[RMDB]
Structure probing data (2A3 and DMS) for a 170-nucleotide construct. It was measured as part of the RMDB library 15KLIB. High DMS reactivity at an A or C suggests that its Watson-Crick edge is free. Values are in units of 0.01, from 0 to 300, in steps of 10.
RNA sequence: GGGAACGACUCGAGUAGAGUCGAAAACUUAUUAUUCCUCGGAUGUUCCCCAGCCAGGGAUUGUCCUCCUCGAGUCUCUUGAGAUUCUUGUUGACCUUCCGGAGCUCCCUCUCGAGUUCCUCCUUUCGAAUCGACUAGUUCGCUAGUCGAAAAAGAAACAACAACAACAAC
Reactivity to 2A3 in 0.01 (KOAc 150mM, MgCl2 10mM, bicine 150mM(pH8.5), 24C), signal-to-noise 9, nucleotides 027 to 129: c010u080u060a050u190u060a070u150u120c010c000u020c040g040g030a080u100g040u050u050c000c000c000c000a010g030c030c010a020g000g010g020a020u030u100g070u040c010c000u020c010c010u020c010g020a010g040u010c010u000c000u050u090g060a060g020a100u090u050c030u080u080g110u090u090g050a080c010c000u060u030c010c020g030g000a010g020c010u020c010c010c000u010c010u010c000g020a010g010u020u030c000c000u020c000c000u030u050u050c020g040a040a070
Reactivity to DMS in 0.01 (KOAc 150mM, MgCl2 10mM, bicine 150mM(pH8.5), 24C), signal-to-noise 6, nucleotides 027 to 129: c140u020u040a060u060u020a000u000u000c030c000u000c090g000g010a060u020g000u030u010c050c010c010c030a100g030c020c020a040g050g020g000a070u050u030g000u000c060c020u010c010c000u000c040g020a070g020u020c000u000c040u000u000g000a100g000a080u000u000c040u000u050g060u010u000g000a070c060c030u040u000c040c040g000g030a120g030c100u030c020c010c000u010c020u030c030g000a110g030u020u030c160c020u050c060c050u050u020u010c050g020a080a180